Overview
The record gives the reactivity of an RNA of 177 nucleotides to DMS and 2A3. For DMS the reverse transcriptase was MarathonRT. The reactions ran in a buffer of 150 mM KOAc, 10 mM MgCl2 and 150 mM bicine (pH 8.5), at 24 C. It was measured as part of the RMDB library OK1LIB. Values cover nucleotides 27 to 126.
RNA sequence: GGGAACGACUCGAGUAGAGUCGAAAAACAAUUACUCAUACAUCGUUGAUUGUGUGGAGGGAUCUUAUUUUGGACUUUGCAAAAUAAAGACUUUGGGAGAUGUAUGCCACUGGUACGGGCUCGACAACUACGCUUACAAAUUCGUUUGUAAGCGUAGAAAAGAAACAACAACAACAAC
Reactivity to DMS in 0.01 (KOAc 150mM, MgCl2 10mM, bicine 150mM(pH8.5), 24C), signal-to-noise 6, nucleotides 027 to 126: a080c140a050a040u030u020a050c080u020c030a080u010a030c070a040u010c060g010u020u030g010a110u010u010g010u020g010u050g000g000a120g000g000g000a120u010c010u000u000a020u000u000u000u010g020g010a120c160u030u020u040g010c010a010a010a010a020u000a030a020a050g010a050c220u020u020u000g000g000g010a160g010a040u010g000u010a020u010g000c140c050a060c060u000g000g010u010a060c100g000g000g000c050u010c040g010a070c190a070a190
Reactivity to 2A3 in 0.01 (KOAc 150mM, MgCl2 10mM, bicine 150mM(pH8.5), 24C), signal-to-noise 7, nucleotides 027 to 126: a000c090a020a040u130u120a070c020u060c030a020u040a090c010a040u060c070g080u050u130g100a220u120u150g040u040g010u060g080g090a090g080g020g020a030u000c000u000u030a050u030u030u020u020g130g020a160c070u140u110u180g030c060a020a000a020a020u100a040a120a000g030a030c020u080u150u120g030g000g000a120g000a030u030g010u050a020u060g040c000c020a060c090u050g010g000u060a030c030g030g000g020c020u040c090g020a030c020a060a020